[RMDB]
RNA sequence: GGGAACGACUCGAGUAGAGUCGAAAAGCUACAUGCAGAUACUCAGCCCGGGGUUCUUGGAGGCGAUCGGCUGCCCGCUGAUCAACAUUCACCAUUCGUUCCUUCCAGCCUUCACCGGCGCGGCCCCGCCUAAUAAUCCUUUCGAGGAUUAUUAGGCAAAAGAAACAACAACAACAAC
Reactivity to 2A3 in 0.01 (KOAc 150mM, MgCl2 10mM, bicine 150mM(pH8.5), 24C), signal-to-noise 5, nucleotides 027 to 126: g010c010u070a070c120a160u280g000c010a010g030a130u090a100c010u020c050a020g020c010c010c010g020g010g000g000u100u120c020u060u080g040g010a050g010g060c060g040a020u020c030g030g020c030u090g100c020c040c030g000c010u020g000a030u020c010a020a060c010a130u100u170c080a050c070c020a050u050u060c020g010u020u030c010c000u060u040c020c010a010g020c010c000u020u030c020a020c030c030g010g000c040g000c040g030g020c000c000c000c020
Reactivity to DMS in 0.01 (KOAc 150mM, MgCl2 10mM, bicine 150mM(pH8.5), 24C), signal-to-noise 6, nucleotides 027 to 126: g020c020u000a080c180a090u010g010c020a060g010a190u000a030c060u000c040a240g000c030c010c020g030g000g010g010u000u010c040u010u000g020g030a100g000g020c230g010a030u000c030g010g020c010u000g010c160c120c100g020c030u010g000a050u010c040a070a180c110a100u010u010c110a090c050c020a090u010u000c020g000u000u000c010c010u000u000c020c030a160g010c020c020u000u000c150a080c160c090g000g000c060g030c070g010g000c010c000c020c110